An RNA of 177 nucleotides, treated with 2A3 and DMS and read out base by base. For DMS the reverse transcriptase was MarathonRT.
RNA sequence: GGGAACGACUCGAGUAGAGUCGAAAACGAAUAUCCCGGGCUACACGCGGGCUACAAUGGAUAGGACAAUGGGUAACUACACCGAAAGGUGGCGUCAAUCUCUUAAACCUAUCCUUAGUUCGGAUUGGAUGUAUAUAUGUUUCGACAUAUAUACAUCAAAAGAAACAACAACAACAAC
Reactivity to 2A3 in 0.01 (KOAc 150mM, MgCl2 10mM, bicine 150mM(pH8.5), 24C), signal-to-noise 9, nucleotides 027 to 126: c050g050a050a040u090a060u100c000c010c000g000g070g010c080u150a060c060a020c110g110c020g010g010g000c010u040a030c090a090a180u150g000g000a000u000a000g000g010a020c070a090a100u140g000g000g020u050a020a000c000u030a010c010a000c000c000g030a060a030a020g000g000u000g000g010c000g000u010c010a060a070u010c020u000c000u050u160a130a150a070c000c000u000a000u000c000c000u000u010a000g000u000u010c030g030g100a160u080u190g100
Reactivity to DMS in 0.01 (KOAc 150mM, MgCl2 10mM, bicine 150mM(pH8.5), 24C), signal-to-noise 9, nucleotides 027 to 126: c140g000a120a090u010a100u000c010c000c010g010g010g020c100u010a070c160a080c140g010c020g010g010g000c050u000a030c300a090a060u020g000g010a010u000a000g000g000a080c150a080a080u020g000g000g000u000a070a020c010u010a100c000a010c000c000g000a100a090a110g000g010u000g000g000c100g000u000c060a040a120u010c000u000c020u000u020a110a140a070c000c000u000a000u000c000c000u000u010a030g010u000u000c010g010g010a160u010u010g010